[RMDB]
Source: RMDB library VIROID, as collected in RNAgym.
Chemical mapping of a 177-nucleotide RNA with 2A3 and DMS.

RNA sequence: GGGAACGACUCGAGUAGAGUCGAAAACAAAUUCCGUAACCGUGUGAGGCCUAAUUGAAGAUGCGUACCAAGCUGCGUUUCAACCUGCAUGGGUUGAGGCGGCUUAGCGGAUUAAGGCGUUCUGCCCCAUAAAGUCAGGCUUCGGCCUGACUUUAUGAAAAGAAACAACAACAACAAC
Reactivity to 2A3 in 0.01 (KOAc 150mM, MgCl2 10mM, bicine 150mM(pH8.5), 24C), signal-to-noise 1, nucleotides 027 to 126: c040a010a130a090u090u060c010c000g030u070a070a140c020c070g040u040g030u030g130a000g050g000c010c000u080a140a180u110u140g110a130a060g100a080u160g050c020g010u050a110c030c030a030a020g050c020u050g000c020g060u000u020u110c000a000a010c000c000u150g080c180a220u300g030g040g000u010u010g000a030g020g020c030g000g000c000u010u010a000g000c020g020g040a010u060u070a030a010g000g000c010g000u070u030c050u060g020c000c000c000
Reactivity to DMS in 0.01 (KOAc 150mM, MgCl2 10mM, bicine 150mM(pH8.5), 24C), signal-to-noise 2, nucleotides 027 to 126: c140a120a100a130u010u000c010c020g000u010a060a080c070c040g000u010g000u000g000a070g030g020c030c010u020a070a100u000u020g000a070a090g030a070u000g000c020g010u050a140c190c070a050a030g000c020u000g010c010g010u000u000u000c010a010a000c010c010u000g020c300a080u010g020g000g010u010u010g000a020g010g020c000g020g000c030u000u000a040g020c000g000g010a070u000u010a060a060g000g000c040g000u000u000c020u000g000c030c020c070

2A3 adducts were read by reverse transcription with SuperScript II with manganese.
The reactions ran in a buffer of 150 mM KOAc, 10 mM MgCl2 and 150 mM bicine (pH 8.5), at 24 C.